[RMDB]
RNA sequence: GGGAACGACUCGAGUAGAGUCGAAAACUCCUGGACCAUAGAGCAUACUCUUGGGAUCAGGACUUCACAUGUGUAACUGCCCAAUGCAGCUUCAUCAUGCUGUCCAACGAUAUUAGUGGAUGAAGCAACUGACUAUGUACUUCGGUACAUAGUCAGUAAAAGAAACAACAACAACAAC
Reactivity to DMS in 0.01 (KOAc 150mM, MgCl2 10mM, bicine 150mM(pH8.5), 24C), signal-to-noise 6, nucleotides 027 to 126: c240u000c010c000u000g000g000a030c000c000a010u030a020g000a010g020c300a220u030a130c020u000c010u010u010g000g010g000a190u000c020a000g000g000a030c170u010u000c070a070c120a060u030g020u000g000u020a060a070c120u020g000c010c010c030a060a090u040g000c140a120g000c000u000u020c000a010u000c010a060u030g000c060u000g000u000c060c100a130a150c230g010a070u010a080u030u030a040g040u020g000g010a020u010g010a020a010g020c030a140
Reactivity to 2A3 in 0.01 (KOAc 150mM, MgCl2 10mM, bicine 150mM(pH8.5), 24C), signal-to-noise 9, nucleotides 027 to 126: c020u000c000c000u000g010g010a010c000c010a050u230a150g000a000g050c160a130u160a300c030u000c000u010u010g040g000g080a210u040c010a000g010g010a010c010u110u100c060a090c020a130u140g080u020g050u160a090a060c040u080g020c010c010c000a020a020u180g030c070a030g000c010u010u010c000a010u000c010a160u090g010c000u020g040u020c040c040a180a070c140g030a050u070a070u260u200a060g010u020g030g000a010u010g000a010a000g000c000a010